The record gives the reactivity of an RNA of 177 nucleotides to DMS and 2A3. For 2A3 the reverse transcriptase was SuperScript II with manganese. DMS adducts were read by reverse transcription with MarathonRT.

[RMDB]
RNA sequence: GGGAACGACUCGAGUAGAGUCGAAAAAGCCGCUAAGGUGUCUGAUUUUCCUCCCUUCCUCUCACAAACCUGCUCACACGGCCUCCUGCUGGACCCAGGGCAUGCAGAGGGAGAGUGGGCAUUGGGGGUGUGUAAGUAGUUUCGACUACUUACACACAAAAGAAACAACAACAACAAC
Reactivity to DMS in 0.01 (KOAc 150mM, MgCl2 10mM, bicine 150mM(pH8.5), 24C), signal-to-noise 4, nucleotides 027 to 126: a120g020c060c020g010c090u020a120a140g020g020u000g020u010c050u020g010a140u010u010u000u000c030c020u010c030c020c010u010u000c040c010u000c050u000c080a100c140a050a070a100c070c070u010g000c020u000c000a030c050a200c110g010g010c020c020u000c040c030u000g010c010u010g010g000a110c050c030c040a120g020g000g020c050a060u000g030c060a040g010a070g000g000g000a270g010a090g020u010g000g000g000c040a050u000u000g010g000g010g010
Reactivity to 2A3 in 0.01 (KOAc 150mM, MgCl2 10mM, bicine 150mM(pH8.5), 24C), signal-to-noise 2, nucleotides 027 to 126: a000g060c070c000g010c190u160a180a030g120g050u040g080u140c070u070g150a220u100u110u090u050c000c010u030c030c000c030u040u060c000c010u020c010u000c020a070c040a030a070a090c020c010u010g000c000u010c010a030c010a020c050g220g040c020c000u010c000c010u000g010c040u020g050g050a080c040c000c050a060g010g060g030c030a020u130g010c000a010g020a050g000g000g000a030g000a000g010u030g020g010g070c020a020u050u130g040g000g010g010